The record gives the reactivity of an RNA of 177 nucleotides to DMS and 2A3. For 2A3, 847 sequencing reads were counted. For 2A3 the reverse transcriptase was SuperScript II with manganese. For DMS the reverse transcriptase was MarathonRT. The RNA was probed in 150 mM KOAc, 10 mM MgCl2 and 150 mM bicine (pH 8.5) at 24 C.
RNA sequence: GGGAACGACUCGAGUAGAGUCGAAAACGCUUGGCAAAUGAGUGUGCUCAGGUGCUAAGCGAAUAUGUUCUAUGUGGUGGUGGUUACUACGUCAAACCUGGAGGUACCAGUAGCGGAGAUGCCACCAGUAUUUGGUUCUGUUCGCAGAACCAAAUACAAAAGAAACAACAACAACAAC
Reactivity to DMS in 0.01 (KOAc 150mM, MgCl2 10mM, bicine 150mM(pH8.5), 24C), signal-to-noise 2, nucleotides 027 to 126: c020g010c000u000u000g000g000c010a010a060a010u000g010a010g000u010g020u020g020c000u000c020a010g010g050u010g000c000u000a010a010g000c000g010a060a030u010a100u000g030u000u000c010u000a080u020g030u000g010g010u000g010g000u000g010g020u000u030a140c010u000a050c020g030u010c080a050a160a170c300c010u000g000g010a160g020g000u020a150c030c030a050g000u010a300g000c020g020g000a040g000a230u010g030c030c010a000c010c010a080
Reactivity to 2A3 in 0.01 (KOAc 150mM, MgCl2 10mM, bicine 150mM(pH8.5), 24C), signal-to-noise 1, nucleotides 027 to 126: c000g000c020u010u020g000g000c010a040a000a000u010g030a000g030u300g020u230g170c020u020c010a000g040g010u030g000c020u010a000a000g000c000g000a010a010u120a040u040g020u020u040c110u040a070u140g130u060g040g090u040g000g000u010g010g000u090u050a080c050u010a020c020g030u090c130a070a060a130c020c010u040g010g070a140g110g160u170a170c020c000a010g000u020a000g000c000g020g010a040g010a050u120g010c010c020a000c000c000a000